[RMDB]
RNA sequence: GGGAACGACUCGAGUAGAGUCGAAAAGAUAUGGACAUCGAUCGCUGAACUACAUGCGUGGCCCUCGGAAACGAGGGAAUCGCAUGCAGCGGGAGUCCUAAGUCAAAGCUCCACUUCGGUGGAGCAAUCAGGAGGUAAACUUCGGUUUACCUCCUGAAAAAGAAACAACAACAACAAC
Reactivity to DMS in 0.01 (KOAc 150mM, MgCl2 10mM, bicine 150mM(pH8.5), 24C), signal-to-noise 2, nucleotides 027 to 126: g000a030u000a300u000g000g000a000c020a140u000c120g000a180u000c000g000c010u000g000a070a080c080u020a300c000a010u000g000c000g000u020g000g000c000c000c020u020c000g000g000a090a110a150c000g030a010g000g010g010a000a010u000c000g000c000a000u000g000c010a000g030c010g010g000g010a080g000u000c000c000u000a040a110g010u010c050a070a080a200g000c000u000c000c000a000c000u000u020c100g030g010u000g000g000a000g000c000a000a000
Reactivity to 2A3 in 0.01 (KOAc 150mM, MgCl2 10mM, bicine 150mM(pH8.5), 24C), signal-to-noise 2, nucleotides 027 to 126: g030a020u120a050u150g010g000a000c040a300u140c120g230a100u130c030g030c010u010g000a090a040c120u230a030c280a010u000g000c000g090u100g220g220c000c000c000u040c020g010g040a140a090a060c000g010a020g000g000g010a000a010u010c000g000c000a000u000g000c020a000g000c000g000g020g000a010g000u000c010c000u030a150a010g060u070c030a000a120a120g000c000u010c000c000a000c000u060u050c240g080g020u010g000g030a010g010c000a000a030